[RMDB]
RNA sequence: GGGAACGACUCGAGUAGAGUCGAAAAGCUACAGUGAUAUAUAUAAUGUGUUACACCACCUGAGAGGGCGGUGCAAUCAUAAAUGUAUAUCAAUACAGGGAUUGCUUGUUGGAAUGUCAAGCAUGAAGUUUACAACAGUAUUCGUACUGUUGUAAACAAAAGAAACAACAACAACAAC
Reactivity to 2A3 in 0.01 (KOAc 150mM, MgCl2 10mM, bicine 150mM(pH8.5), 24C), signal-to-noise 7, nucleotides 027 to 126: g070c040u110a090c070a090g070u030g050a010u000a000u000a000u000a000u020a050a160u100g040u010g000u040u020a010c000a000c010c000a010c010c000u030g020a020g030a040g050g000g000c010g010g000u000g000c010a010a030u050c000a000u030a080a220a010u010g000u000a000u000a000u010c000a020a010u140a070c070a050g100g030g100a110u050u030g000c020u010u020g020u070u060g110g150a210a120u160g040u120c010a010a000g000c000a010u060g050a080a030
Reactivity to DMS in 0.01 (KOAc 150mM, MgCl2 10mM, bicine 150mM(pH8.5), 24C), signal-to-noise 8, nucleotides 027 to 126: g000c050u010a080c130a120g010u010g000a000u000a010u010a010u000a010u000a110a050u010g010u020g010u010u000a070c000a010c000c000a020c000c010u000g010a220g000a190g000g000g020c040g010g030u000g010c020a030a000u000c000a010u010a030a120a060u000g010u010a000u000a000u000c000a040a060u020a080c130a100g010g010g010a090u000u010g000c030u000u000g000u000u000g010g020a100a100u010g000u010c030a020a040g020c030a050u000g010a130a080